[RMDB]
RNA sequence: GGGAACGACUCGAGUAGAGUCGAAAAGAUAUGGAUGAGACAGGGAGCUCGUGGUCGGAAACGACCAUAGAGCGAAGAACUGUGUCAUCCUAAGUCAAACUAGUGUCCCCUUCGGGGGACACUAGAACAAACGGGUAGAGUUCGCUCUACCCGUUUGAAAAGAAACAACAACAACAAC
Reactivity to DMS in 0.01 (KOAc 150mM, MgCl2 10mM, bicine 150mM(pH8.5), 24C), signal-to-noise 1, nucleotides 027 to 126: g020a030u000a030u000g010g010a010u000g010a030g000a000c010a010g000g000g050a000g050c000u000c000g030u010g030g000u010c000g020g000a030a020a010c000g010a010c010c000a000u000a030g020a030g000c000g000a060a100g000a250a300c020u000g010u000g020u000c000a040u000c000c000u000a010a030g000u000c000a090a130a300c000u010a000g010u000g000u010c030c000c010c000u010u020c290g030g030g000g010g010a000c010a000c000u000a000g010a170a230
Record summary
Source: RMDB library TTRDES, as collected in RNAgym. The record gives the reactivity of an RNA of 177 nucleotides to DMS. In probing experiments dimethyl sulfate is read out at A N1 and C N3, which are open when not base-paired. Values are in units of 0.01, from 0 to 300, in steps of 10. For DMS the reverse transcriptase was MarathonRT. The reactions ran in a buffer of 150 mM KOAc, 10 mM MgCl2 and 150 mM bicine (pH 8.5), at 24 C. The DMS profile rests on 1,020 reads.